[RMDB]
RNA sequence: GGGAACGACUCGAGUAGAGUCGAAAAGAUGUGAUGCAGUGUCGUCUGCGAUGUGUCACAUUGAAGCGGUGGGCAGUGUGUGGAAGUACGUCGACGAUGAGUACGCUGCACCACAUGAUCAGGCAUGGGCUUAAUCAAGGUUCGCCUUGGUUGAGCCAAAAGAAACAACAACAACAAC
Reactivity to 2A3 in 0.01 (KOAc 150mM, MgCl2 10mM, bicine 150mM(pH8.5), 24C), signal-to-noise 8, nucleotides 027 to 126: g060a000u000g000u000g000a000u010g000c000a000g010u000g010u030c010g000u010c020u030g000c000g000a010u020g000u000g030u020c000a000c000a000u000u030g020a060a000g040c020g030g020u050g010g040g000c000a010g000u000g000u000g000u030g050g090a050a020g060u060a010c010g030u010c010g010a100c010g000a030u040g010a000g030u020a010c010g000c000u000g000c000a030c000c000a000c000a010u030g020a080u100c040a010g040g000c030a040u110g080
Reactivity to DMS in 0.01 (KOAc 150mM, MgCl2 10mM, bicine 150mM(pH8.5), 24C), signal-to-noise 9, nucleotides 027 to 126: g010a030u000g000u000g000a040u000g000c000a000g010u000g020u000c030g010u010c010u010g000c030g010a020u000g020u010g010u010c010a000c010a010u000u000g000a090a110g000c050g010g010u000g000g000g020c020a020g010u010g010u000g000u020g010g010a110a130g000u040a030c020g010u000c030g000a060c070g000a030u010g010a000g020u040a110c060g010c010u000g000c000a030c030c000a020c000a020u000g000a080u020c080a090g000g010c120a120u030g000